Notes: Source: RMDB library TTRINS, as collected in RNAgym. This 177-nucleotide RNA was probed chemically with DMS and 2A3. The RNA was probed in 150 mM KOAc, 10 mM MgCl2 and 150 mM bicine (pH 8.5) at 24 C. The DMS profile rests on 879 reads. DMS adducts were read by reverse transcription with MarathonRT.

[RMDB]
RNA sequence: GGGAACGACUCGAGUAGAGUCGAAAAGAUAUGGACGUUCGUACAACAGCAAUAACGAUGUGGGAUCGAAGCUGUCGGAAACGACAGUGUAGUCACAUCGUUAUUGACAUGUACGGCGUCCUAAGUCCUGCACCAUGCACUUCGGUGCAUGGUGCAGAAAAGAAACAACAACAACAAC
Reactivity to DMS in 0.01 (KOAc 150mM, MgCl2 10mM, bicine 150mM(pH8.5), 24C), signal-to-noise 1, nucleotides 027 to 126: g000a140u000a280u000g000g000a000c000g060u000u000c000g060u000a010c070a020a070c270a160g020c000a010a000u000a000a010c000g000a000u000g010u020g050g050g040a130u000c020g000a180a300g020c000u000g020u010c010g000g010a130a170a230c000g010a030c000a060g010u000g000u000a210g010u000c000a040c000a000u000c000g000u000u010a000u000u000g000a000c190a090u000g000u000a030c000g000g000c010g010u000c000c000u000a000a020g050u000c010
Reactivity to 2A3 in 0.01 (KOAc 150mM, MgCl2 10mM, bicine 150mM(pH8.5), 24C), signal-to-noise 1, nucleotides 027 to 126: g030a000u130a140u300g000g000a090c070g030u300u300c030g000u300a000c000a160a020c020a150g070c010a020a040u000a010a000c010g020a000u020g030u000g030g100g210a190u300c000g070a100a010g000c000u000g000u000c000g000g080a110a090a090c000g030a000c000a000g020u150g010u300a020g000u000c000a000c010a000u000c000g000u000u000a000u030u000g000a000c000a060u020g000u000a000c080g000g000c020g010u020c000c000u010a000a000g000u000c000